[RMDB]
RNA sequence: GGGAACGACUCGAGUAGAGUCGAAAAGACCGCUGAAUGCGGAAGUACUAGAUCAACUAGAAAGUAGAUGAAUACAAAAGCUACGUCUCGAAACUAGUUGAUCUAGUUCACUCGAGACGUAGGAAGAGAUGCGAGCGUAGUUCGCUACGCUCGCAUCAAAAGAAACAACAACAACAAC
Reactivity to 2A3 in 0.01 (KOAc 150mM, MgCl2 10mM, bicine 150mM(pH8.5), 24C), signal-to-noise 2, nucleotides 027 to 126: g020a000c000c000g000c000u180g300a250a190u300g000c000g050g040a020a050g070u020a080c010u000a000g020a020u000c000a000a030c010u000a000g070a090a230a000g040u260a030g060a120u060g190a240a080u140a050c080a070a000a080a000g030c000u020a030c000g030u040c000u000c020g050a040a040a010c000u000a020g000u000u000g000a000u000c000u000a000g000u000u030c000a000c000u050c000g020a020g000a050c000g020u000a090g080g020a030a030g000a010
Reactivity to DMS in 0.01 (KOAc 150mM, MgCl2 10mM, bicine 150mM(pH8.5), 24C), signal-to-noise 1, nucleotides 027 to 126: g030a210c010c000g000c040u000g010a220a060u020g000c000g040g010a100a120g040u000a190c000u000a000g000a000u000c030a000a000c000u000a000g000a290a140a090g020u030a030g010a190u000g000a120a030u000a100c300a140a050a080a070g000c050u000a060c020g000u010c000u000c000g000a080a080a030c000u000a000g000u000u020g000a030u000c000u020a000g000u000u050c080a040c090u010c050g000a000g000a030c000g000u000a010g000g060a170a080g000a180